[RMDB]
RNA sequence: GGGAACGACUCGAGUAGAGUCGAAAAGAUAUGGACGAUGUGGCGGCCAACAGCUCGGAAACGAGACAUGGCUACCAUUUCGUCCUAAGUCAAAACGGACACAUAGCCUUCGGGCUAUGUGUCCGAACCGUAGACUAAACUUCGGUUUAGUCUACGGAAAAGAAACAACAACAACAAC
Reactivity to DMS in 0.01 (KOAc 150mM, MgCl2 10mM, bicine 150mM(pH8.5), 24C), signal-to-noise 2, nucleotides 027 to 126: g000a030u000a300u000g030g010a000c010g000a030u000g000u000g030g000c020g000g010c000c000a040a080c280a210g000c010u020c000g010g000a070a060a180c000g040a010g000a040c120a160u000g000g010c000u000a020c010c000a010u000u000u000c000g000u000c000c000u000a020a030g000u010c040a080a060a100a230c030g020g010a020c000a020c000a010u000a000g000c010c000u000u030c190g020g000g000c000u000a000u000g000u000g000u010c000c000g000a000a010
Reactivity to 2A3 in 0.01 (KOAc 150mM, MgCl2 10mM, bicine 150mM(pH8.5), 24C), signal-to-noise 2, nucleotides 027 to 126: g010a020u060a030u110g000g000a020c000g000a000u010g000u000g050g000c060g040g000c020c010a090a070c130a160g030c020u000c010g030g050a090a110a060c020g000a010g050a040c030a100u110g020g000c000u010a030c000c000a000u010u000u010c010g000u030c000c000u000a030a000g030u000c020a040a000a110a160c000g000g030a010c030a000c000a010u010a010g010c000c010u120u270c300g010g000g000c000u040a010u000g010u000g000u000c000c000g000a010a000
Conditions: 150 mM KOAc, 10 mM MgCl2 and 150 mM bicine (pH 8.5), 24 C. An RNA of 177 nucleotides, treated with DMS and 2A3 and read out base by base. 2A3 adducts were read by reverse transcription with SuperScript II with manganese. The 2A3 profile rests on 3,986 reads.